Description:
This 207-nucleotide RNA was probed chemically with DMS and 2A3. DMS adducts were read by reverse transcription with MarathonRT. Conditions: 150 mM KOAc, 10 mM MgCl2 and 150 mM bicine (pH 8.5), 24 C.
RNA sequence: GGGAACGACUCGAGUAGAGUCGAAAAUGACCAACUCUUCAGUUUUUGAGGCAUUCUCGUUGUUUUGACGUAUGAUACUUUGCAAUCUGAUAAUACUUUUUUGCAAUUCAAUCGUAUUGUUACGGUAAUGUUGCAUAAACACUGGCAUUUGAUACUGCAAAGACUCUUACUUCGGUAAGAGUCUUUGAAAAGAAACAACAACAACAAC
Reactivity to DMS in 0.01 (KOAc 150mM, MgCl2 10mM, bicine 150mM(pH8.5), 24C), signal-to-noise 2, nucleotides 027 to 156: u000g010a190c120c020a080a100c030u010c040u020u010c050a240g030u000u000u000u000u000g020a020g020g010c030a030u010u010c010u000c020g020u000u010g000u010u030u000u020g010a070c060g000u000a020u010g010a030u000a070c070u010u000u010g010c020a020a030u000c070u000g010a140u000a150a190u010a170c040u010u010u000u010u010u000g010c030a010a060u000u020c020a130a050u000c040g050u000a030u020u010g020u000u000a060c080g000g000u010a030a110u000g000u000u000g010c040a070u000a090a050a050c050a090c060u010g020g020c040a100u000u000u000g030a170u000a070c070u000g000
Reactivity to 2A3 in 0.01 (KOAc 150mM, MgCl2 10mM, bicine 150mM(pH8.5), 24C), signal-to-noise 5, nucleotides 027 to 156: u070g090a080c010c020a060a100c050u070c070u260u150c060a070g030u040u030u030u080u100g040a020g020g000c030a020u020u010c070u040c030g020u030u110g070u090u130u090u160g070a030c020g020u020a020u060g030a030u030a060c040u010u010u010g000c000a010a020u020c040u030g080a060u050a180a100u160a250c040u070u070u020u030u040u040g000c000a010a010u010u030c010a080a020u010c020g020u020a010u020u300g070u120u070a010c010g000g010u020a040a060u060g000u010u010g010c020a010u050a040a050a020c070a020c050u020g020g000c010a060u040u030u070g080a080u140a100c040u120g030